Source information: This 177-nucleotide RNA was probed chemically with 2A3. Source: RMDB library OK1LIB, as collected in RNAgym.
RNA sequence: GGGAACGACUCGAGUAGAGUCGAAAACUCAUCCUUUGAUAGCGCAAUGGUUAAUUUCUUAGCUUGAAUGCGGCCACAGAGUGAGGAAAGAGCACCUUCAUAUAGUCCUUCGUCACUGAAGGCAUUAGCGUGACCCGAGGUUCGCCUCGGGUCACGCAAAAGAAACAACAACAACAAC
Reactivity to 2A3 in 0.01 (KOAc 150mM, MgCl2 10mM, bicine 150mM(pH8.5), 24C), signal-to-noise 1, nucleotides 027 to 126: c000u000c000a080u180c000c040u080u060u060g120a290u190a120g270c060g030c000a000a080u170g000g000u000u000a010a010u100u000u000c040u000u100a000g100c120u080u210g100a270a000u130g060c060g150g000c070c000a150c000a120g000a000g040u100g000a000g080g020a000a300a000g170a130g000c190a060c000c000u020u300c190a100u230a100u120a290g020u300c000c000u000u000c000g290u000c000a000c150u190g000a000a000g010g080c000a060u000u080a000